[RMDB]
RNA sequence: GGGAACGACUCGAGUAGAGUCGAAAAUGAAGCGUGGGCGGCAACCGGGUCAAGCGCGAUCACGGUGCCGAGGUCAGCCCUUCUGGGGUGAUGCGGCACGCAAGGCCAUGCCUUGUGCAGCAACAUCGAUCUUGAGGUAGUUCGCUACCUCAAGAUCAAAAGAAACAACAACAACAAC
Reactivity to DMS in 0.01 (KOAc 150mM, MgCl2 10mM, bicine 150mM(pH8.5), 24C), signal-to-noise 3, nucleotides 027 to 126: u020g020a090a070g020c120g020u000g000g010g020c000g000g000c010a040a060c020c000g010g000g030u000c010a050a080g000c190g020c170g000a030u000c020a040c050g010g010u000g030c000c000g020a020g040g000u000c070a080g000c020c050c000u000u020c070u020g000g010g000g030u030g010a000u000g010c300g020g020c030a280c060g010c050a000a000g000g000c010c130a190u030g010c000c010u000u000g010u000g000c110a090g010c020a020a030c040a040u010c020
Reactivity to 2A3 in 0.01 (KOAc 150mM, MgCl2 10mM, bicine 150mM(pH8.5), 24C), signal-to-noise 6, nucleotides 027 to 126: u140g040a060a000g030c040g030u100g030g050g000c000g010g010c000a040a060c010c000g000g020g000u000c040a130a020g130c090g050c130g150a000u030c030a030c110g010g010u000g000c000c000g000a000g000g060u060c010a060g030c010c010c020u140u160c130u180g030g000g000g010u030g010a040u020g010c000g000g000c000a000c040g020c010a010a010g010g000c060c180a180u300g000c000c000u030u020g010u020g020c080a050g020c010a040a050c010a060u080c050